Overview: This 177-nucleotide RNA was probed chemically with DMS and 2A3. The reactions ran in a buffer of 150 mM KOAc, 10 mM MgCl2 and 150 mM bicine (pH 8.5), at 24 C. Values cover nucleotides 27 to 126. For DMS the reverse transcriptase was MarathonRT.
RNA sequence: GGGAACGACUCGAGUAGAGUCGAAAACAUUAGCCGUUCGCGGCUAAUGCCGACUGUCUUGUUUGAUGGUAGUGUGGAAGGACAGGUAGACCUUUUUAGAAAUCGCCCAUUCAUUCGUGAAUGGGAAUCUAUAUACGCACUUCGGUGCGUAUAUAGAAAAAGAAACAACAACAACAAC
Reactivity to DMS in 0.01 (KOAc 150mM, MgCl2 10mM, bicine 150mM(pH8.5), 24C), signal-to-noise 5, nucleotides 027 to 126: c000a000u000u000a000g020c000c000g020u010u010c240g030c010g010g000c010u000a000a000u000g020c030c050g010a110c040u000g000u010c020u000u000g000u000u000u000g000a110u000g010g020u000a050g020u000g020u010g000g010a130a040g010g000a040c050a030g000g010u000a090g000a160c050c010u000u000u000u010u020a130g000a050a080a100u010c200g000c000c000c010a010u000u000c000a040u000u020c190g000u010g000a010a010u000g000g000g010a010a000
Reactivity to 2A3 in 0.01 (KOAc 150mM, MgCl2 10mM, bicine 150mM(pH8.5), 24C), signal-to-noise 4, nucleotides 027 to 126: c000a000u010u000a000g020c010c000g020u020u050c240g010c010g080g000c010u000a010a000u010g020c000c010g060a040c020u030g040u020c020u090u230g140u220u140u110g170a100u080g070g120u070a110g030u060g040u080g150g050a030a030g020g020a020c020a000g000g060u040a010g050a050c010c000u070u100u030u050u170a140g060a060a120a040u160c090g030c010c000c000a000u010u000c000a010u020u060c160g100u030g030a010a000u000g000g000g000a010a000